Source information
The data come from the RNA Mapping Database (RMDB), libraries RFM100 and RFMREP. An RNA of 177 nucleotides, treated with 2A3 and DMS and read out base by base. Values are in units of 0.01, from 0 to 300, in steps of 10. The RNA was probed in 150 mM KOAc, 10 mM MgCl2 and 150 mM bicine (pH 8.5) at 24 C. Reactivities are given for positions 27 through 126.
RNA sequence: GGGAACGACUCGAGUAGAGUCGAAAAUCAUUCCCCUAAAGCAUGUUAAACCUAACGCCCUAAGCCCAUAAACGGUAUGUGAAGAUGCAUACUACGGGAUCGUGUACUUGUACAAAUGAUAAUCUCAACUAUACUCAACCUUCGGGUUGAGUAUAGUAAAAGAAACAACAACAACAAC
Reactivity to 2A3 in 0.01 (KOAc 150mM, MgCl2 10mM, bicine 150mM(pH8.5), 24C), signal-to-noise 6, nucleotides 027 to 126: u110c000a020u010u050c000c000c000c020u120a190a010a020g050c030a050u080g020u130u190a060a090a070c020c020u040a070a030c040g040c010c010c000u050a070a060g010c010c000c010a060u130a100a090a030c060g000g030u010a010u010g040u030g130a180a150g090a120u300g000c000a010u000a040c010u050a060c050g010g030g030a030u060c030g010u020g010u050a070c050u090u080g040u060a030c060a050a120a080u120g070a050u060a190a160u060c030u000c030a040
Reactivity to DMS in 0.01 (KOAc 150mM, MgCl2 10mM, bicine 150mM(pH8.5), 24C), signal-to-noise 4, nucleotides 027 to 126: u010c160a240u010u000c000c000c000c150u000a070a100a100g010c090a040u030g000u000u000a050a130a090c030c030u000a040a110c130g000c010c010c020u000a080a120g040c030c000c030a090u030a090a130a080c200g010g000u000a010u000g030u020g010a070a130g000a110u050g000c000a030u020a010c070u030a100c200g030g010g000a030u000c030g020u000g000u000a050c040u010u000g010u010a050c100a070a060a050u000g000a050u010a070a080u010c010u000c030a150